An RNA of 177 nucleotides, treated with 2A3 and DMS and read out base by base. 2A3 adducts were read by reverse transcription with SuperScript II with manganese.
RNA sequence: GGGAACGACUCGAGUAGAGUCGAAAACUUCUGCCUCGGUCGCCGCGGAUCACUGGCGUCCAGCGGAGAAACAGGAGCUCGUCUCCUUCCUUUCGCUGCUGGCUCCACACCUCCGAUCGUCGCUGAGCACAAGACUAUCGUUCGCGAUAGUCUUGUGAAAAGAAACAACAACAACAAC
Reactivity to 2A3 in 0.01 (KOAc 150mM, MgCl2 10mM, bicine 150mM(pH8.5), 24C), signal-to-noise 2, nucleotides 027 to 126: c000u080u050c030u080g070c000c010u060c010g030g040u240c040g010c060c020g000c030g000g020a050u060c010a030c120u020g000g000c020g050u100c000c000a010g000c000g040g000a040g010a000a010a080c300a050g020g010a000g010c060u110c300g300u140c120u060c000c030u040u070c000c000u000u020u020c000g000c000u030g000c010u020g000g030c000u010c000c020a060c010a020c000c010u000c010c000g070a250u110c000g000u000c010g060c010u030g000a010g000
Reactivity to DMS in 0.01 (KOAc 150mM, MgCl2 10mM, bicine 150mM(pH8.5), 24C), signal-to-noise 1, nucleotides 027 to 126: c100u010u000c040u000g000c140c000u000c020g040g020u010c010g020c030c000g010c060g000g000a060u010c090a140c300u000g000g000c020g000u010c000c000a010g020c010g000g010a060g000a010a020a000c220a010g000g000a020g000c040u030c300g010u010c010u000c010c000u000u010c020c000u000u000u010c000g000c010u000g000c000u000g000g000c040u000c010c010a020c070a110c200c190u000c020c000g000a050u020c020g010u000c050g010c000u020g000a040g010
Conditions: 150 mM KOAc, 10 mM MgCl2 and 150 mM bicine (pH 8.5), 24 C. Values are in units of 0.01, from 0 to 300, in steps of 10. For DMS, 1,559 sequencing reads were counted.